Structure probing data (DMS and 2A3) for a 177-nucleotide construct.
[RMDB]
RNA sequence: GGGAACGACUCGAGUAGAGUCGAAAACAGUUAGAGCAUGAGCGCUACGGUGACCUCGAUCCUGCGCAGCUGGCCGACAAGUUCCGGAUGGCUUGGAGUGUGUAACGAUGGCCGACUCCGCCGGUUCACAGUGGACACUGUUCGCAGUGUCCACUGUAAAAGAAACAACAACAACAAC
Reactivity to DMS in 0.01 (KOAc 150mM, MgCl2 10mM, bicine 150mM(pH8.5), 24C), signal-to-noise 2, nucleotides 027 to 126: c070a080g010u010u000a060g030a070g000c050a100u000g000a080g040c070g030c050u020a040c110g030g000u000g010a120c080c020u000c120g000a050u010c020c000u000g030c020g000c210a030g040c040u000g000g030c000c010g010a040c050a030a070g000u000u000c020c050g010g010a150u000g030g000c030u000u000g020g000a140g010u010g010u020g010u010a090a030c060g030a140u010g000g010c050c010g010a070c060u020c080c040g010c030c050g020g000u010u000c070
Reactivity to 2A3 in 0.01 (KOAc 150mM, MgCl2 10mM, bicine 150mM(pH8.5), 24C), signal-to-noise 1, nucleotides 027 to 126: c010a070g060u080u140a070g020a020g020c020a060u120g120a020g020c050g000c000u000a010c050g110g070u070g020a060c020c020u100c070g000a030u000c000c020u040g050c000g030c040a020g010c030u010g030g000c000c000g020a020c030a110a000g020u080u000c030c020g080g010a130u230g030g000c010u020u050g100g000a060g000u100g010u020g020u090a020a040c060g050a080u080g070g090c040c000g000a020c020u000c020c000g020c010c010g000g070u070u030c110

Description
For DMS the reverse transcriptase was MarathonRT. The reactions ran in a buffer of 150 mM KOAc, 10 mM MgCl2 and 150 mM bicine (pH 8.5), at 24 C.